[RMDB]
RNA sequence: GGGAACGACUCGAGUAGAGUCGAAAAGAUAUGGAUAAUUGCCAUAGAACUACGUCCCGUAUCGGAAACGAUACGGAGACGCUAUGGUUUCGAAUUAUCCUAAGUCAAAUCGGGCUUCGGCCCGAAACCAGAGUAUCAUGUUCGCAUGAUACUCUGGAAAAGAAACAACAACAACAAC
Reactivity to 2A3 in 0.01 (KOAc 150mM, MgCl2 10mM, bicine 150mM(pH8.5), 24C), signal-to-noise 3, nucleotides 027 to 126: g030a030u080a020u150g000g000a000u010a020a070u180u200g020c010c010a010u030a010g030a130a160c290u300a070c300g000u000c000c000c000g020u000a000u000c000g000g060a050a050a020c000g000a010u010a010c010g000g020a250g000a010c000g000c020u000a010u010g000g000u030u050u300c130g140a060a090u100u000a010u030c000c000u010a150a010g030u000c020a020a050a200u040c010g000g000g020c020u080u130c300g170g000c010c020c000g000a020a000a010
Reactivity to DMS in 0.01 (KOAc 150mM, MgCl2 10mM, bicine 150mM(pH8.5), 24C), signal-to-noise 3, nucleotides 027 to 126: g010a040u000a300u010g000g000a020u000a010a030u000u020g010c000c000a020u000a000g000a160a080c260u010a300c000g010u000c000c000c000g000u010a020u000c000g000g010a110a080a180c000g000a020u000a010c000g000g000a060g050a010c000g010c010u000a000u000g020g020u010u020u010c260g000a070a030u010u000a010u000c000c000u000a050a180g000u010c020a040a130a190u000c010g000g000g000c000u010u000c230g030g000c020c000c000g000a000a040a070

This 177-nucleotide RNA was probed chemically with 2A3 and DMS.
DMS adducts were read by reverse transcription with MarathonRT.
The 2A3 profile rests on 5,788 reads.